[RMDB]
Structure probing data (DMS and 2A3) for a 177-nucleotide construct. The reactions ran in a buffer of 150 mM KOAc, 10 mM MgCl2 and 150 mM bicine (pH 8.5), at 24 C. For 2A3, 1,290 sequencing reads were counted. 2A3 adducts were read by reverse transcription with SuperScript II with manganese.
RNA sequence: GGGAACGACUCGAGUAGAGUCGAAAAUGAGACUGGCCUGGAAGCAUAGCCAGAAAUUAGAACGCCUAAGGGAAGAAGGUCACAACGCUGCCUCUGCAAUUUAGGAGUGUAUAUGCUUUCCUGCAGGGUAGUGCAGCUUGUUCGCAAGCUGCACUACAAAAGAAACAACAACAACAAC
Reactivity to DMS in 0.01 (KOAc 150mM, MgCl2 10mM, bicine 150mM(pH8.5), 24C), signal-to-noise 2, nucleotides 027 to 126: u030g000a140g000a150c070u000g030g000c050c060u000g010g010a110a080g000c000a040u010a080g000c030c040a070g000a100a030a110u000u010a090g000a080a080c160g000c010c010u000a030a020g000g000g010a110a000g000a080a030g030g000u000c170a030c090a110a110c150g010c070u000g010c040c000u010c010u000g000c010a120a150u000u000u000a040g010g020a030g000u000g010u010a060u000a080u040g000c000u000u000u000c040c020u000g000c060a060g000g030
Reactivity to 2A3 in 0.01 (KOAc 150mM, MgCl2 10mM, bicine 150mM(pH8.5), 24C), signal-to-noise 1, nucleotides 027 to 126: u140g030a030g060a000c040u030g110g030c060c030u000g000g030a050a000g040c040a030u040a050g010c030c020a050g100a030a020a000u170u080a030g020a140a040c050g030c000c030u030a050a000g030g060g010a020a050g020a040a020g010g000u120c060a000c050a060a290c150g000c100u020g060c010c000u060c000u000g030c070a020a170u030u040u050a030g000g020a050g080u100g030u090a080u010a000u280g000c000u070u030u000c000c030u010g040c020a020g110g050